Chemical mapping of a 177-nucleotide RNA with DMS and 2A3.

RNA sequence: GGGAACGACUCGAGUAGAGUCGAAAAGAAAGCGCGAGACCAAGAUGCUGAAAAAGAGCAUCGGUCGAGCCUAAAGUCGUUUGAGGCCGGAAAAGCGACGAGGCAGCGAAGCUGUCGAGCGCGAAAAGGGAUAUUGCUACUUCGGUAGCAAUAUCCCAAAAGAAACAACAACAACAAC
Reactivity to DMS in 0.01 (KOAc 150mM, MgCl2 10mM, bicine 150mM(pH8.5), 24C), signal-to-noise 1, nucleotides 027 to 126: g020a220a040a080g000c070g000c000g050a300g000a000c030c090a170a150g020a000u000g000c020u000g070a020a110a150a210a120g090a020g000c000a000u010c000g000g040u000c060g020a220g030c000c000u000a080a020a080g000u000c020g000u030u000u000g000a090g020g010c000c030g050g110a150a010a010a120g030c000g000a000c010g000a100g000g000c000a090g010c070g000a000a000g000c170u000g080u000c000g000a300g000c000g000c000g070a020a040a030a080
Reactivity to 2A3 in 0.01 (KOAc 150mM, MgCl2 10mM, bicine 150mM(pH8.5), 24C), signal-to-noise 1, nucleotides 027 to 126: g000a020a050a030g050c000g010c000g000a000g000a060c000c000a050a050g000a000u020g000c010u020g150a040a000a000a200a000g220a050g000c000a000u000c000g000g000u020c000g030a000g030c030c000u060a010a010a020g000u020c070g000u000u000u000g060a100g000g120c010c020g010g000a040a010a000a090g010c000g090a080c000g000a100g000g000c020a060g010c020g150a080a080g000c050u000g000u000c050g010a000g020c090g010c000g080a090a150a000a000
Annotation
The reactions ran in a buffer of 150 mM KOAc, 10 mM MgCl2 and 150 mM bicine (pH 8.5), at 24 C. For 2A3, 794 sequencing reads were counted. 2A3 adducts were read by reverse transcription with SuperScript II with manganese. The data come from the RNA Mapping Database (RMDB), library OK1LIB.